[RMDB]
Conditions: 150 mM KOAc, 10 mM MgCl2 and 150 mM bicine (pH 8.5), 24 C.
Chemical mapping of a 207-nucleotide RNA with 2A3.
2A3 adducts were read by reverse transcription with SuperScript II with manganese.
The 2A3 profile rests on 512 reads.
Values cover nucleotides 27 to 156.

RNA sequence: GGGAACGACUCGAGUAGAGUCGAAAAGGCACCACCAGGAGUAAACGUUUAUGUCGCAGUUAACUCUGCUCCGAAAAGCCACUCGAAAGAGUGUGGUGUCCUUAGAGGCUAGUCAGUCCGCUGGCAACACAAUCAAAUUGCGGGAAACUCCUUAGAGCUUUUCAAGCACGUUCGCGUGCUUGAAAAGAAAAGAAACAACAACAACAAC
Reactivity to 2A3 in 0.01 (KOAc 150mM, MgCl2 10mM, bicine 150mM(pH8.5), 24C), signal-to-noise 1, nucleotides 027 to 156: g000g040c010a010c020c010a020c040c060a030g000g040a000g030u060a030a050a110c130g030u070u100u070a150u160g170u100c090g040c090a080g000u010u050a000a000c040u000c020u090g000c000u000c010c000g010a000a060a060a060g070c050c010a000c020u020c020g140a080a060a050g010a000g000u010g010u050g000g000u000g050u110c000c000u020u010a070g000a020g140g000c010u030a010g010u030c040a030g010u010c000c070g010c030u020g020g050c030a210a000c070a080c030a150a060u090c070a090a130a120u060u170g020c000g000g060g000a060a080a010c010u010c050c000u100u130a070g020a030g200